Record summary: The data come from the RNA Mapping Database (RMDB), library OK3TST. The record gives the reactivity of an RNA of 207 nucleotides to 2A3 and DMS. The reactions ran in a buffer of 150 mM KOAc, 10 mM MgCl2 and 150 mM bicine (pH 8.5), at 24 C. 2A3 adducts were read by reverse transcription with SuperScript II with manganese. Reactivities are given for positions 27 through 156.
RNA sequence: GGGAACGACUCGAGUAGAGUCGAAAACUCACUCACUACGGUGAGUGAGAAUGCUUAAGCCUCAAUAAAGCUUGGCUUGAGUGCCUCAGGCAGAUAUAGACUGAAACAUUUAGUAUGGCCAAGCAGGGAGCAACGGCUCGAGUACGCUCGAGCCGAACAUUACGCAUGAUUUCGAUCAUGCGUAAUGAAAAGAAACAACAACAACAAC
Reactivity to 2A3 in 0.01 (KOAc 150mM, MgCl2 10mM, bicine 150mM(pH8.5), 24C), signal-to-noise 5, nucleotides 027 to 156: c000u000c000a000c000u000c000a000c000u040a020c270g050g000u000g000a000g000u000g000a000g000a020a070u090g020c010u020u070a070a080g030c010c010u090c080a120a240u160a210a110a010g000c010u010u010g010g010c000u020u060g050a050g040u060g020c010c020u080c060a040g020g000c030a020g150a070u120a060u060a160g110a080c020u040g010a040a080a020c020a020u040u120u090a100g060u080a100u150g020g000c000c000a000a000g000c010a010g020g020g020a100g000c050a090a070c000g000g000c000u000c000g010a020g000u050a050c210g010c060u000c000g000a000g000c000c000g000a010a010
Reactivity to DMS in 0.01 (KOAc 150mM, MgCl2 10mM, bicine 150mM(pH8.5), 24C), signal-to-noise 3, nucleotides 027 to 156: c010u000c000a010c000u000c000a050c000u000a100c300g070g020u000g010a060g020u000g010a030g020a060a060u000g010c020u000u000a050a120g000c020c010u000c060a110a150u010a120a100a090g000c000u000u000g010g010c020u000u010g010a040g030u010g000c040c000u000c020a010g000g000c010a220g020a210u000a200u020a180g000a030c010u000g020a060a030a040c010a000u000u000u010a100g030u010a070u010g030g050c000c010a020a010g010c010a200g010g000g000a100g020c000a090a210c010g010g000c040u010c010g010a060g010u010a110c300g050c020u000c000g000a050g000c010c000g010a010a060